[RMDB]
About this RNA:
Source: RMDB library TTRDEL, as collected in RNAgym. Structure probing data (DMS and 2A3) for a 177-nucleotide construct. The DMS profile rests on 2,316 reads.
RNA sequence: GGGAACGACUCGAGUAGAGUCGAAAAGAUAUGGACUAUACGAAUGAACUACCGUUCCCACGUCGGAAACGACGUGCACGGCACUAUAUAGUCCUAAGUCAAAGUGGUAGGCUUCGGCCUACCACAAUCGUGUUAGGAUGUUCGCAUCCUAACACGAAAAAGAAACAACAACAACAAC
Reactivity to DMS in 0.01 (KOAc 150mM, MgCl2 10mM, bicine 150mM(pH8.5), 24C), signal-to-noise 3, nucleotides 027 to 126: g010a030u000a300u000g000g020a000c000u000a010u000a030c160g010a120a100u000g000a110a120c140u000a230c010c010g000u000u020c100c130c000a000c010g010u000c000g000g040a100a090a140c000g010a010c000g000u000g060c150a000c010g000g010c050a040c090u020a140u000a000u000a000g010u000c000c010u020a050a150g000u000c030a060a110a130g010u000g010g020u000a000g010g000c020u000u000c270g020g000c000c000u000a000c000c000a000c010a010a070
Reactivity to 2A3 in 0.01 (KOAc 150mM, MgCl2 10mM, bicine 150mM(pH8.5), 24C), signal-to-noise 3, nucleotides 027 to 126: g040a010u120a040u170g000g020a000c000u010a000u030a060c120g190a270a290u240g030a210a070c070u180a130c240c020g030u050u040c020c010c000a000c010g000u000c010g020g040a100a030a050c010g000a000c010g000u010g000c030a000c020g010g050c060a030c110u020a050u010a000u010a120g000u000c000c000u040a120a010g030u030c080a150a010a110g000u010g000g000u000a000g010g000c010u020u120c300g090g000c010c000u000a000c000c010a000c000a000a000

The RNA was probed in 150 mM KOAc, 10 mM MgCl2 and 150 mM bicine (pH 8.5) at 24 C. Reactivities are given for positions 27 through 126. For DMS the reverse transcriptase was MarathonRT. For 2A3 the reverse transcriptase was SuperScript II with manganese. 2A3 is a SHAPE reagent: it acylates the 2'-hydroxyl of flexible nucleotides of all four kinds.